Source: RMDB library OK1LIB, as collected in RNAgym. Structure probing data (DMS and 2A3) for a 177-nucleotide construct. For DMS, 9,478 sequencing reads were counted.

RNA sequence: GGGAACGACUCGAGUAGAGUCGAAAAGCGAUCAAUAAUAAGUCGACUACUCGAAAGAGUCUCAUGGAAACAUGCCUACUAAUGCGUCCAAUGUAGCUCGACGAUUAGGACGCAGAAGAUCGCGAAAGCACCUACUGAUAUUCGUAUCAGUAGGUGCAAAAGAAACAACAACAACAAC
Reactivity to DMS in 0.01 (KOAc 150mM, MgCl2 10mM, bicine 150mM(pH8.5), 24C), signal-to-noise 5, nucleotides 027 to 126: g010c010g000a000u000c000a140a110u030a110a120u050a110a150g020u010c000g010a110c080u000a110c140u010c010g000a090a080a130g010a050g000u010c070u000c020a010u000g010g000a140a060a090c030a000u010g000c180c070u000a080c100u020a060a070u010g000c180g000u000c000c000a060a040u020g010u030a020g020c120u030c070g000a090c050g000a050u000u000a100g000g000a030c020g000c010a030g000a090a080g000a020u000c020g010c010g010a090a090a110
Reactivity to 2A3 in 0.01 (KOAc 150mM, MgCl2 10mM, bicine 150mM(pH8.5), 24C), signal-to-noise 8, nucleotides 027 to 126: g040c000g020a010u020c060a060a050u160a230a030u140a210a020g050u010c010g010a030c000u050a010c020u020c040g050a100a050a030g010a010g030u010c010u000c010a010u010g020g030a020a040a030c010a040u070g030c010c010u060a100c040u070a080a050u050g000c000g010u010c010c010a020a070u090g040u090a110g020c070u050c160g140a130c000g000a030u000u050a050g000g000a010c000g000c010a000g000a030a020g000a010u060c020g000c010g070a090a040a020

For 2A3 the reverse transcriptase was SuperScript II with manganese. Values cover nucleotides 27 to 126. The reactions ran in a buffer of 150 mM KOAc, 10 mM MgCl2 and 150 mM bicine (pH 8.5), at 24 C.